An RNA of 207 nucleotides, treated with DMS and 2A3 and read out base by base. The data come from the RNA Mapping Database (RMDB), library M2RFPK. DMS adducts were read by reverse transcription with MarathonRT. For 2A3 the reverse transcriptase was SuperScript II with manganese. Reactivities are given for positions 27 through 156.
RNA sequence: GGGAACGACUCGAGUAGAGUCGAAAAAGUGAGUAUGGCUCGUUACGACGAACCAUACUCACAACGGUUUUCCUAAAUCGUCGUGAGACGGACCUUGGAAAACCUAGUAUUUAAAUAACUAGGUCAAAUUAGCCUAGAUCCUUCGGGAUCUAGGCAACUUGACAUAGGAGUUCGCUCCUAUGUCAAGAAAAGAAACAACAACAACAAC
Reactivity to DMS in 0.01 (KOAc 150mM, MgCl2 10mM, bicine 150mM(pH8.5), 24C), signal-to-noise 1, nucleotides 027 to 156: a160g000u010g000a010g010u000a000u000g000g000c000u000c000g010u000u010a150c300g000a110c010g010a020a000c000c000a000u000a000c020u000c010a010c000a020a060c070g020g010u000u030u000u040c010c000u000a020a020a090u010c000g050u000c000g050u000g000a300g000a050c000g000g010a030c060c040u000u010g000g010a040a040a030a010c000c010u000a040g010u010a120u000u000u000a130a220a200u000a090a110c050u000a040g030g010u010c040a020a070a120u010u010a050g000c030c000u010a020g010a040u000c000c000u000u010c300g070g000g040a020u000c000u020a010g000g010c000a000a000
Reactivity to 2A3 in 0.01 (KOAc 150mM, MgCl2 10mM, bicine 150mM(pH8.5), 24C), signal-to-noise 5, nucleotides 027 to 156: a000g010u000g000a000g000u010a000u000g010g000c000u010c010g010u010u060a090c300g010a010c000g000a070a000c000c000a000u000a000c000u000c000a000c000a000a000c010g000g010u000u000u000u010c000c000u000a000a010a000u060c010g010u000c010g010u020g150a160g000a050c010g000g000a010c010c000u020u020g000g000a000a000a000a000c000c000u000a010g020u020a040u050u130u080a100a170a120u120a080a030c100u060a010g000g000u000c010a010a050a160u180u160a040g000c010c000u000a000g000a000u010c000c010u030u090c230g070g000g000a000u010c000u000a000g000g000c000a000a000